[RMDB]
RNA sequence: GGGAACGACUCGAGUAGAGUCGAAAAAGGAUGUUCGGCGGCCCGGGCACCGCGAGCCGGCCGAGCUCCAGCCGGAGCUACGUGACUACGUCCACCCGCACCUACAGCCUGGGCAGCGCGCUGCGCCAGUUCUAGCCCUAUUCGUAGGGCUAGAACUAAAAGAAACAACAACAACAAC
Reactivity to DMS in 0.01 (KOAc 150mM, MgCl2 10mM, bicine 150mM(pH8.5), 24C), signal-to-noise 2, nucleotides 027 to 126: a130g010g000a040u000g000u000u010c030g010g010c000g020g000c010c020c020g010g010g020c020a070c150c110g000c070g000a100g010c000c020g030g040c020c000g000a040g000c020u000c000c000a190g010c120c150g010g010a070g000c010u000a060c090g000u000g000a150c160u000a080c060g010u000c020c040a130c020c030c040g010c110a090c070c060u000a080c100a130g000c050c030u000g010g000g020c060a090g000c020g000c070g020c050u000g010c020g030c020c140
Reactivity to 2A3 in 0.01 (KOAc 150mM, MgCl2 10mM, bicine 150mM(pH8.5), 24C), signal-to-noise 2, nucleotides 027 to 126: a010g010g010a020u060g020u070u060c030g000g010c040g010g000c030c020c000g000g040g030c090a120c120c080g110c040g040a000g010c000c010g070g070c020c020g000a020g010c000u000c010c000a030g150c090c190g000g030a020g000c030u130a070c100g050u120g090a040c060u060a030c140g030u030c010c000a040c000c010c010g040c040a110c010c000u150a100c050a010g000c010c020u000g000g010g010c020a030g000c050g000c030g020c090u130g030c000g030c000c030